Notes:
Chemical mapping of a 207-nucleotide RNA with DMS. DMS (dimethyl sulfate) methylates the pairing face of unpaired adenines and cytosines. For DMS the reverse transcriptase was MarathonRT.

[RMDB]
RNA sequence: GGGAACGACUCGAGUAGAGUCGAAAAUCCUAAGUCUAAGCAACACUUCCAUUACCAUUAGUAAAGUACAGAGCAUCGGGUACUCGGAAACGAGUAUCUCUAGCGUGUGCGACGAAGUACUUGAACGUGGUAAUGGAAGUGUUGCUUAGAUAUGGAAUCAUAUGUGACAGUUCGCUGUCACAUAUGAAAAAGAAACAACAACAACAAC
Reactivity to DMS in 0.01 (KOAc 150mM, MgCl2 10mM, bicine 150mM(pH8.5), 24C), signal-to-noise 2, nucleotides 027 to 156: u010c000c000u000a130a170g010u000c000u000a030a010g000c010a020a040c020a020c020u000u000c010c000a020u000u000a010c010c010a050u000u020a200g010u000a120a040a010g040u020a030c030a130g000a300g000c010a100u000c030g010g010g030u000a020c010u000c000g050g030a110a070a200c030g010a000g020u020a010u000c000u010c020u000a170g050c120g030u030g030u000g040c010g010a300c120g020a140a170g050u000a020c000u000u000g030a140a210c300g020u000g010g000u000a010a000u000g000g060a000a010g000u000g000u000u000g000c000u000u000a000g010a020u000a060u000g030g000a110a260